[RMDB]
RNA sequence: GGGAACGACUCGAGUAGAGUCGAAAAGAUAUGGAGGAUUCGUACGCUGUUGUAGACAUGUCCAAGAAGGGUCGGAAACGACCCGUAAGGACAACAGCUACACCAGCGUACGAAUCCUCCUAAGUCAGCUAUGUACGAAGUUCGCUUCGUACAUAGCAAAAGAAACAACAACAACAAC
Reactivity to DMS in 0.01 (KOAc 150mM, MgCl2 10mM, bicine 150mM(pH8.5), 24C), signal-to-noise 2, nucleotides 027 to 126: g000a050u000a300u000g020g000a000g050g000a020u000u000c000g010u030a000c000g000c010u000g000u010u000g000u000a000g000a010c140a220u010g010u010c000c000a030a160g020a170a300g000g000g020u000c000g030g000a100a110a300c030g010a040c000c000c000g000u000a080a280g010g000a010c000a020a050c300a100g010c000u000a000c020a000c060c000a010g010c010g030u000a000c000g010a010a000u000c020c000u000c000c000u010a000a060g000u000c050a150
The data come from the RNA Mapping Database (RMDB), library TTRINS. Structure probing data (DMS) for a 177-nucleotide construct. Conditions: 150 mM KOAc, 10 mM MgCl2 and 150 mM bicine (pH 8.5), 24 C. DMS adducts were read by reverse transcription with MarathonRT.